[RMDB]
RNA sequence: GGGAACGACUCGAGUAGAGUCGAAAAGACCAAUAACAGAAUGCACCACAGCGUAAAAUCAUCUGAUUGGGUGAGUUGGUCGCACCGCCAUUUGACGAACGAACGCCAAGCCUUAGCCGUCUUUGUGAACACGAGCUAGUCUUCGGACUAGCUCGAAUCUUGAUGAUGAGUUCGCUCAUCAUCAAGAAAAAGAAACAACAACAACAAC
Reactivity to 2A3 in 0.01 (KOAc 150mM, MgCl2 10mM, bicine 150mM(pH8.5), 24C), signal-to-noise 4, nucleotides 027 to 156: g010a000c010c010a010a030u130a100a010c040a030g150a150a130u110g070c040a030c020c010a060c010a050g020c010g100u130a030a110a060a050u070c060a020u000c020u050g100a270u120u190g070g000g000u030g010a050g020u030u020g010g010u020c020g010c010a010c000c040g000c000c010a070u080u040u120g070a050c060g020a100a020c010g020a060a000c060g020c030c070a060a020g000c050c040u060u080a020g000c020c020g010u040c010u040u070u040g070u040g050a090a040c070a030c170g000a010g000c010u000a000g000u000c000u010u030c130g060g000a000c000u000a010g000c000u000c000g000a000a000
Reactivity to DMS in 0.01 (KOAc 150mM, MgCl2 10mM, bicine 150mM(pH8.5), 24C), signal-to-noise 2, nucleotides 027 to 156: g060a130c000c000a060a050u010a060a280c070a200g010a050a090u010g000c010a070c040c030a050c040a120g010c050g030u000a090a080a110a110u000c030a050u000c000u020g000a120u000u000g020g000g040u000g040a120g010u000u000g020g020u010c040g040c030a080c030c030g000c040c030a150u020u000u010g020a030c030g050a070a090c070g000a020a090c020g020c010c000a050a080g010c020c020u010u000a110g020c010c010g010u000c040u010u010u000g000u020g000a100a080c090a150c020g000a010g010c000u000a020g000u000c000u000u000c300g010g000a020c000u000a000g010c000u000c020g010a010a020
An RNA of 207 nucleotides, treated with 2A3 and DMS and read out base by base. The reactions ran in a buffer of 150 mM KOAc, 10 mM MgCl2 and 150 mM bicine (pH 8.5), at 24 C. 2A3 adducts were read by reverse transcription with SuperScript II with manganese.